[RMDB]
Conditions: 150 mM KOAc, 10 mM MgCl2 and 150 mM bicine (pH 8.5), 24 C.
An RNA of 177 nucleotides, treated with DMS and 2A3 and read out base by base.
Values cover nucleotides 27 to 126.
RNA sequence: GGGAACGACUCGAGUAGAGUCGAAAAGAUAUGGAUACUAGAACUACUCUAGUGGCAGCGAAGAACAACGUAAGAUCGGAAACGAUCUUACGUUGGGAGCUGCCGCUAGAGCUAGUAUCCUAAGUCACUAUUUAGCUGAGUUCGCUCAGCUAAAUAGAAAAGAAACAACAACAACAAC
Reactivity to DMS in 0.01 (KOAc 150mM, MgCl2 10mM, bicine 150mM(pH8.5), 24C), signal-to-noise 3, nucleotides 027 to 126: g010a030u010a290u010g000g000a030u000a010c000u000a010g010a070a050c080u050a300c010u000c000u000a000g020u000g010g000c000a010g000c000g030a160a130g010a130a300c000a000a000c000g010u000a000a010g010a010u000c000g000g000a060a090a150c000g000a000u000c000u000u010a000c010g010u000u000g000g010g010a170g010c000u000g010c000c000g010c000u000a000g010a010g000c000u000a010g000u000a000u000c000c000u000a000a070g010u000c020a300
Reactivity to 2A3 in 0.01 (KOAc 150mM, MgCl2 10mM, bicine 150mM(pH8.5), 24C), signal-to-noise 2, nucleotides 027 to 126: g000a010u050a020u110g020g010a000u010a010c000u020a000g060a160a090c150u270a070c010u300c010u020a000g010u020g030g000c000a010g000c070g210a300a100g070a270a020c000a000a000c010g000u020a010a000g000a020u020c000g010g000a080a020a030c010g020a000u000c010u020u000a000c010g000u010u000g000g000g000a060g020c010u010g010c010c000g000c000u000a010g000a000g000c000u000a000g010u000a000u000c010c000u010a010a000g000u000c000a010